[RMDB]
RNA sequence: GGGAACGACUCGAGUAGAGUCGAAAAGAAGGUACCAACAAACACACACGAACGGAGAGCGUGUGUGAACUCUCCGAAAAACAAAAAGGACAACCUGGUCCGACAGGAACAAAGGUACCGAAAGAAAGGGUAAGAGUUUCUUCGGAAACUCUUACCCAAAAGAAACAACAACAACAAC
Reactivity to 2A3 in 0.01 (KOAc 150mM, MgCl2 10mM, bicine 150mM(pH8.5), 24C), signal-to-noise 1, nucleotides 027 to 126: g210a080a000g020g000u010a000c010c020a000a210c060a040a090a000c000a000c000a000c000a000c020g060a200a040c100g000g080a060g010a000g040c040g020u010g000u000g000u000g000a000a020c030u020c020u020c080c020g150a000a000a000a000a000c180a040a100a030a060a030g020g000a000c020a090a040c020c030u010g070g000u000c000c000g120a020c020a000g010g010a070a060c090a220a050a040g000g000u000a000c000c000g000a000a000a000g030a050a000a010
Reactivity to DMS in 0.01 (KOAc 150mM, MgCl2 10mM, bicine 150mM(pH8.5), 24C), signal-to-noise 1, nucleotides 027 to 126: g000a150a060g000g000u000a000c000c000a130a180c250a060a110a230c090a070c030a000c000a000c090g000a050a120c050g030g000a130g000a130g000c000g050u030g000u000g040u000g000a000a010c290u000c120u000c010c000g000a000a000a050a220a200c240a000a100a020a080a070g020g030a000c090a210a060c150c070u070g010g030u000c000c030g000a070c270a030g020g020a000a030c060a070a090a020g000g000u000a010c000c000g020a050a080a030g000a050a000a030

Background: Source: RMDB library OK1LIB, as collected in RNAgym. An RNA of 177 nucleotides, treated with 2A3 and DMS and read out base by base. 2A3 is a SHAPE reagent: it acylates the 2'-hydroxyl of flexible nucleotides of all four kinds. Values cover nucleotides 27 to 126. The reactions ran in a buffer of 150 mM KOAc, 10 mM MgCl2 and 150 mM bicine (pH 8.5), at 24 C. For DMS, 1,160 sequencing reads were counted.